[RMDB]
RNA sequence: GGGAACGACUCGAGUAGAGUCGAAAAGGUGCGGUCCGUCGGGGAAGAUCGCGGCGAUCCUGGUGCGCGCGGGGGCGGUGCGCGCCGCCCACCCGGCCACCAGCGCGACCGCGCCGACGCUCCAUCAACCAUCCUAGUACUUCGGUACUAGGAUGGUAAAAGAAACAACAACAACAAC
Reactivity to DMS in 0.01 (KOAc 150mM, MgCl2 10mM, bicine 150mM(pH8.5), 24C), signal-to-noise 2, nucleotides 027 to 126: g000g010u000g010c070g010g000u010c020c020g010u010c030g020g000g000g020a150a170g010a130u010c020g000c070g000g010c090g030a090u020c150c020u000g010g030u000g000c160g000c000g000c050g040g000g000g010g010c020g000g010u000g020c280g020c250g000c000c010g040c010c030c080a130c100c040c000g000g000c000c000a010c010c030a010g000c080g030c300g000a060c000c000g030c020g000c010c000g000a050c100g010c110u000c010c010a090u010c190a190
Reactivity to 2A3 in 0.01 (KOAc 150mM, MgCl2 10mM, bicine 150mM(pH8.5), 24C), signal-to-noise 2, nucleotides 027 to 126: g020g000u010g000c010g000g010u030c070c010g020u020c050g010g090g060g110a130a180g140a200u250c090g000c030g180g010c030g030a050u080c010c000u000g000g000u000g000c090g000c030g020c000g010g000g000g000g000c020g020g020u110g130c300g000c160g020c030c000g010c000c000c010a070c030c000c000g000g000c000c000a010c000c000a000g000c050g010c030g020a030c010c000g000c020g010c010c000g000a000c020g020c030u000c030c020a130u140c030a010